[RMDB]
RNA sequence: GGGAACGACUCGAGUAGAGUCGAAAACUGCCGCGUCCUGGCGGGAGUGCUCAAGCAGGUUCUGCAAAUAAUGCAGCGUGACUGCAGGGACCAGCGGCGCGAUAGCCGUGAGAUCGUUUUUCGCCAGUCGCUCCUUCGAAUUCGUUCGAAGGAGCGAAAAAGAAACAACAACAACAAC
Reactivity to 2A3 in 0.01 (KOAc 150mM, MgCl2 10mM, bicine 150mM(pH8.5), 24C), signal-to-noise 1, nucleotides 027 to 126: c020u050g020c020c050g060c010g080u010c030c000u040g060g010c000g010g030g000a040g050u100g030c000u000c030a090a050g020c030a030g040g090u180u000c040u030g000c000a030a090a260u300a150a090u230g050c030a010g010c050g080u110g060a050c020u000g000c000a030g060g020g020a030c040c020a020g000c010g040g000c020g000c000g090a070u070a050g060c000c040g050u110g020a070g000a100u090c020g040u020u000u020u030u150c010g030c000c020a020g100
Reactivity to DMS in 0.01 (KOAc 150mM, MgCl2 10mM, bicine 150mM(pH8.5), 24C), signal-to-noise 1, nucleotides 027 to 126: c060u000g000c030c000g000c060g000u000c050c030u000g000g040c020g000g000g000a140g000u000g020c030u000c020a150a210g010c060a040g040g000u000u030c030u010g000c020a060a090a120u000a080a100u020g000c020a000g000c210g030u000g020a150c000u000g010c020a170g010g000g010a020c050c070a180g000c020g010g000c020g010c020g000a050u000a080g030c000c020g020u000g000a100g040a140u000c020g020u010u000u000u000u030c000g010c080c070a070g010

Structure probing data (2A3 and DMS) for a 177-nucleotide construct.
The 2A3 profile rests on 1,071 reads.
2A3 adducts were read by reverse transcription with SuperScript II with manganese.